[RMDB]
RNA sequence: GGGAACGACUCGAGUAGAGUCGAAAAAUAGCCCAGACUUAUGGGAGAGUGGUUACCUCUCAGCCCUUCCACCUUAGGGUGCCCUAUCCGAAGCACUGCAGUUUCGGUAGAAAGGCUAAGCACCUCGGUCUAUUGAUGAGUUCGCUCAUCAAUAGACAAAAGAAACAACAACAACAAC
Reactivity to 2A3 in 0.01 (KOAc 150mM, MgCl2 10mM, bicine 150mM(pH8.5), 24C), signal-to-noise 1, nucleotides 027 to 126: a000u060a000g090c020c000c020a010g090a090c060u090u070a020u070g000g000g020a000g030a020g000u040g030g050u070u070a020c000c010u040c010u000c010a000g000c000c000c000u020u040c030c070a240c030c080u070u120a020g000g000g010u000g030c000c000c000u010a060u060c010c000g030a010a010g010c070a020c260u300g050c140a120g030u000u000u000c010g000g000u000a000g040a090a080a000g020g000c030u020a060a000g030c030a020c000c000u060c150g040
Reactivity to DMS in 0.01 (KOAc 150mM, MgCl2 10mM, bicine 150mM(pH8.5), 24C), signal-to-noise 2, nucleotides 027 to 126: a100u050a150g000c020c000c040a150g030a210c040u000u000a010u000g000g000g000a040g000a040g010u010g010g000u000u000a170c150c000u000c000u000c040a040g010c000c000c000u000u000c140c090a070c130c110u010u010a050g000g000g010u000g010c000c020c010u010a100u000c000c020g030a010a010g000c010a090c160u000g020c200a140g010u000u000u000c000g010g000u000a040g000a020a040a070g000g010c050u000a020a070g010c100a060c050c010u000c210g000
The data come from the RNA Mapping Database (RMDB), library VIROID. Structure probing data (2A3 and DMS) for a 177-nucleotide construct. The reactions ran in a buffer of 150 mM KOAc, 10 mM MgCl2 and 150 mM bicine (pH 8.5), at 24 C.